[RMDB]
RNA sequence: GGGAACGACUCGAGUAGAGUCGAAAAGAUAUGGAGUCUCAUAGGGAGGCCAUCGGAAACGAUGGGCCAUCGAUCUAUACGCGAGACUCCUAAGUCAAAGACUGGCAGGGUUCGCCCUGCCAGUCAACAAUACUAAACACUUCGGUGUUUAGUAUUGAAAAGAAACAACAACAACAAC
Reactivity to DMS in 0.01 (KOAc 150mM, MgCl2 10mM, bicine 150mM(pH8.5), 24C), signal-to-noise 5, nucleotides 027 to 126: g000a030u000a300u010g010g000a020g010u000c010u000c000a070u000a040g010g010g000a040g020g010c010c000a020u000c000g010g010a120a100a150c000g010a000u000g020g040g020c000c000a130u010c120g000a050u020c020u000a040u000a100c240g020c240g010a010g000a010c000u000c000c010u000a020a070g000u010c030a110a120a110g000a020c000u000g000g000c000a020g010g000g010u000u010c250g010c000c000c000u000g000c000c000a000g000u000c000a020a070
Reactivity to 2A3 in 0.01 (KOAc 150mM, MgCl2 10mM, bicine 150mM(pH8.5), 24C), signal-to-noise 3, nucleotides 027 to 126: g020a010u040a040u160g000g020a010g000u000c010u000c020a040u060a030g110g030g010a020g020g020c010c010a010u010c010g030g000a050a030a040c010g000a010u070g090g120g030c000c010a140u230c010g020a020u010c020u060a060u030a190c270g040c110g220a010g010a000c000u020c000c000u020a040a000g000u010c030a150a070a040g000a010c010u040g000g050c000a000g000g020g040u110u200c220g180c000c000c010u000g000c000c000a000g000u000c000a000a000